[RMDB]
RNA sequence: GGGAACGACUCGAGUAGAGUCGAAAACACUCCAACAUAUUAUCAUGGCUUCUUAGUUCAGGCUCUUCAACUAUGGCAUCAUAAGAAGAUAUUCCUAGGAGACCAGCUGUUGCAAUUAUUUAAUCAAAAUGCUAUGCUAAAUACCAUGGACACAACCCGCGUCUACCUAAUUCGUUAGGUAGACGCGAAAAGAAACAACAACAACAAC
Reactivity to 2A3 in 0.01 (KOAc 150mM, MgCl2 10mM, bicine 150mM(pH8.5), 24C), signal-to-noise 2, nucleotides 027 to 156: c030a070c040u110c030c030a070a030c030a120u190a090u260u190a070u230c020a020u020g100g000c030u100u000c020u100u070a030g020u120u090c110a060g030g030c010u010c000u180u030c030a130a170c060u070a100u170g070g000c020a080u080c020a010u170a110a070g030a030a000g110a050u030a170u040u000c030c020u030a020g010g080a040g010a080c010c000a020g000c040u010g020u110u130g000c020a040a070u000u030a030u060u300u260a090a170u160c100a300a000a010a000u090g000c010u010a010u170g000c000u050a000a040a120u070a140c000c000a030u030g050g010a040c010a040c000a200a050c000c000
Source: RMDB library OK3TST, as collected in RNAgym. Structure probing data (2A3) for a 207-nucleotide construct. The reactions ran in a buffer of 150 mM KOAc, 10 mM MgCl2 and 150 mM bicine (pH 8.5), at 24 C. The 2A3 profile rests on 445 reads.